An RNA of 177 nucleotides, treated with 2A3 and DMS and read out base by base. 2A3 adducts were read by reverse transcription with SuperScript II with manganese.
[RMDB]
RNA sequence: GGGAACGACUCGAGUAGAGUCGAAAACAGUGCCUGCUGUUAAUGUUCGUGCUUCCAAAGCGGCGAUGCAUGGGAGGAGGUCGUCUCUGAGCGUAGGGACGGUUGGCAGGCGAUCGGCCAUUAACAGAAUCCCUAGGCUGUUCGCAGCCUAGGGAUUAAAAGAAACAACAACAACAAC
Reactivity to 2A3 in 0.01 (KOAc 150mM, MgCl2 10mM, bicine 150mM(pH8.5), 24C), signal-to-noise 3, nucleotides 027 to 126: c100a030g040u060g120c030c000u050g000c000u020g020u300u030a010a000u010g020u030u020c000g000u010g060c010u080u050c110c020a080a160a110g030c020g110g010c080g040a060u140g030c030a010u040g030g050g010a100g010g050a050g000g050u010c010g000u000c010u000c000u050g180a080g210c120g070u240a050g020g010g100a030c010g000g050u040u020g010g000c040a010g040g000c020g000a040u070c000g000g010c000c000a100u040u030a060a030c010a030g070
Reactivity to DMS in 0.01 (KOAc 150mM, MgCl2 10mM, bicine 150mM(pH8.5), 24C), signal-to-noise 1, nucleotides 027 to 126: c190a150g030u030g020c020c000u000g000c010u000g020u020u000a000a070u000g000u010u010c030g080u000g030c000u000u000c140c160a090a160a110g070c020g000g000c050g000a050u060g010c000a150u000g000g010g000a010g000g050a270g000g030u000c000g000u000c010u000c030u000g000a090g000c190g000u000a040g020g010g000a050c030g000g030u060u000g000g000c090a060g000g000c000g000a040u010c100g020g020c030c000a100u040u090a050a060c050a170g030